[RMDB]
RNA sequence: GGGAACGACUCGAGUAGAGUCGAAAAGACAUCGGUAUUGGAUUUGACUCCAUUAUUCAAAGUGAAAGUUCUGUAAAAAAACCAGAAACGCAAGCUCAGCUCAGCAUUAUAGGUCUUGCUAUAGACAAAUACGCAUAUAGUUCGCUAUAUGCGUAUUAAAAGAAACAACAACAACAAC
Reactivity to DMS in 0.01 (KOAc 150mM, MgCl2 10mM, bicine 150mM(pH8.5), 24C), signal-to-noise 8, nucleotides 027 to 126: g010a110c060a060u010c140g010g020u000a030u000u010g010g020a050u010u000u020g010a130c170u010c020c020a040u000u000a040u000u010c060a070a120a130g020u000g000a110a080a140g000u000u000c000u000g010u010a000a000a110a080a060a090a090c150c020a050g010a050a060a060c110g010c050a080a070g010c030u010c060a070g010c040u000c060a070g010c050a050u010u000a070u010a070g010g010u000c040u000u000g010c150u000a060u000a040g010a050c110a070
Reactivity to 2A3 in 0.01 (KOAc 150mM, MgCl2 10mM, bicine 150mM(pH8.5), 24C), signal-to-noise 5, nucleotides 027 to 126: g060a010c030a040u060c070g040g000u060a030u010u060g030g020a040u080u060u250g060a050c040u000c010c030a010u020u060a050u110u170c070a120a090a040g060u060g080a160a040a030g020u090u010c040u070g050u190a100a080a060a050a010a020a140c040c010a030g070a030a060a000c030g000c040a000a030g000c000u020c070a010g000c020u030c050a030g010c030a040u060u120a110u150a120g100g000u010c010u020u030g060c030u100a080u100a140g040a020c030a020